[RMDB]
RNA sequence: GGGAACGACUCGAGUAGAGUCGAAAAACAUGCUGGCCUACCCAACCCCACGAUCCUCCAUCGGCAUGAUCAUGAUGUGUUCUCAAAUAUCAGGCCAGUAAAUCACCAUGCUCGUGCUGGUAAAGGCAACUUAUGCCCAAGUUCGCUUGGGCAUAAAGUCCAUAACCCUAUUCGUAGGGUUAUGGACAAAAGAAACAACAACAACAAC
Reactivity to 2A3 in 0.01 (KOAc 150mM, MgCl2 10mM, bicine 150mM(pH8.5), 24C), signal-to-noise 3, nucleotides 027 to 156: a020c040a000u060g010c010u010g000g000c010c000u050a060c050c020c020a080a100c030c010c010c010a050c090g050a090u070c000c050u050c030c020a030u030c020g010g000c010a000u000g000a010u030c010a000u000g040a060u080g040u000g020u070u010c060u030c050a050a070a040u220a140u160c050a010g000g000c010c000a000g000u010a000a040a040u100c010a000c030c000a000u010g000c020u000c000g000u010g000c000u010g020g000u030a160a130a040g020g000c020a080a020c060u010u010a000u000g000c000c000c000a000a000g000u030u030c050g000c160u010u000g100g000g000c000a000u000a000a000a000
Reactivity to DMS in 0.01 (KOAc 150mM, MgCl2 10mM, bicine 150mM(pH8.5), 24C), signal-to-noise 2, nucleotides 027 to 156: a070c030a120u000g040c010u010g010g000c030c010u020a220c080c050c020a080a180c020c000c000c020a100c210g020a120u000c040c000u010c020c050a060u000c020g020g000c020a010u000g000a060u000c020a060u010g000a010u000g030u000g000u000u000c050u000c040a070a050a180u010a140u010c080a080g000g070c010c010a040g020u010a010a020a100u030c040a030c000c000a050u000g020c080u010c010g050u000g000c000u000g010g040u000a030a050a030g040g010c060a050a110c060u000u000a000u000g000c000c000c010a020a050g010u000u010c250g000c000u020u010g000g000g010c000a000u010a000a020a130